An RNA of 177 nucleotides, treated with DMS and 2A3 and read out base by base.
Conditions: 150 mM KOAc, 10 mM MgCl2 and 150 mM bicine (pH 8.5), 24 C.
It was measured as part of the RMDB library OK2TST.
High 2A3 reactivity points to a flexible backbone, as in loops and unpaired stretches.
For 2A3 the reverse transcriptase was SuperScript II with manganese.
RNA sequence: GGGAACGACUCGAGUAGAGUCGAAAACGAGCCGUUUGUGUACGACAAGCGCGUUUUAUGGAAACGUGUUGGGCGCAUUCGUCGAUUAAUCGGAUUCAAACUGCGAGUAAUCACCAAAUCACCAGUAUGAUGAAUUUACAUUCGUGUAAAUUCAUCAAAAAGAAACAACAACAACAAC
Reactivity to DMS in 0.01 (KOAc 150mM, MgCl2 10mM, bicine 150mM(pH8.5), 24C), signal-to-noise 9, nucleotides 027 to 126: c040g010a300g010c040c060g010u010u000u000g010u000g010u000a050c040g010a050c080a110a100g010c030g010c010g010u000u000u000u010a140u010g010g010a040a020a020c010g020u000g020u000u000g020g020g000c010g020c240a140u000u000c070g030u010c030g010a100u000u000a090a120u000c020g000g000a060u000u000c070a040a040a060c120u000g000c010g000a190g000u000a060a090u010c060a190c050c030a060a070a110u010c140a090c120c110a070g010u000a100
Reactivity to 2A3 in 0.01 (KOAc 150mM, MgCl2 10mM, bicine 150mM(pH8.5), 24C), signal-to-noise 6, nucleotides 027 to 126: c010g000a000g020c020c020g000u000u030u020g020u010g020u050a040c020g010a030c080a070a030g020c020g000c010g010u000u000u000u060a300u140g250g130a010a000a000c010g000u010g020u070u050g070g030g000c020g000c100a160u210u200c030g050u010c010g050a020u050u130a090a050u050c010g040g000a010u010u010c010a040a050a020c010u040g030c010g000a020g020u040a030a060u070c070a070c110c020a030a070a060u140c070a060c120c020a040g060u100a110